This 177-nucleotide RNA was probed chemically with DMS and 2A3. Source: RMDB library M2PK50, as collected in RNAgym. For DMS the reverse transcriptase was MarathonRT. Conditions: 150 mM KOAc, 10 mM MgCl2 and 150 mM bicine (pH 8.5), 24 C.
[RMDB]
RNA sequence: GGGAACGACUCGAGUAGAGUCGAAAAUCUGGACCGUUCGCGGUCCAGAAACUACCGAGAAUGCGACACGGUAUAUAAACGCAACCCUUGGAAACAAGGGAACACUCUGCUGCUUCGGCAGCAGAAAGAAUUCCAGUCUAUUCGUAGACUGGAAUUCAAAAGAAACAACAACAACAAC
Reactivity to DMS in 0.01 (KOAc 150mM, MgCl2 10mM, bicine 150mM(pH8.5), 24C), signal-to-noise 2, nucleotides 027 to 126: u000c000u010g000g020a010c000c000g050u010u000c260g030c020g020g030u010c000c010a010g000a000a100a080c040u000a030c010c000g020a180g010a140a100u000g020c000g010a110c200a080c000g000g020u000a010u000a030u000a000a020a080c020g000c030a070a230c000c000c000u000u000g020g000a110a150a210c000a010a000g010g000g000a090a070c160a120c140u000c000u000g000c020u000g000c000u000u010c240g000g010c000a010g010c000a010g000a010a060a100
Reactivity to 2A3 in 0.01 (KOAc 150mM, MgCl2 10mM, bicine 150mM(pH8.5), 24C), signal-to-noise 3, nucleotides 027 to 126: u010c010u010g000g000a000c010c010g000u040u030c250g010c000g120g000u000c000c000a010g010a000a000a000c000u010a000c000c000g000a020g060a120a120u090g020c000g030a020c040a020c170g020g030u010a100u010a020u040a300a060a010c030g010c020a020a180c010c000c000u010u000g010g020a080a030a010c010a010a000g000g000g020a000a000c000a010c020u020c000u000g010c000u010g000c000u030u030c190g110g000c000a010g030c000a000g010a010a000a020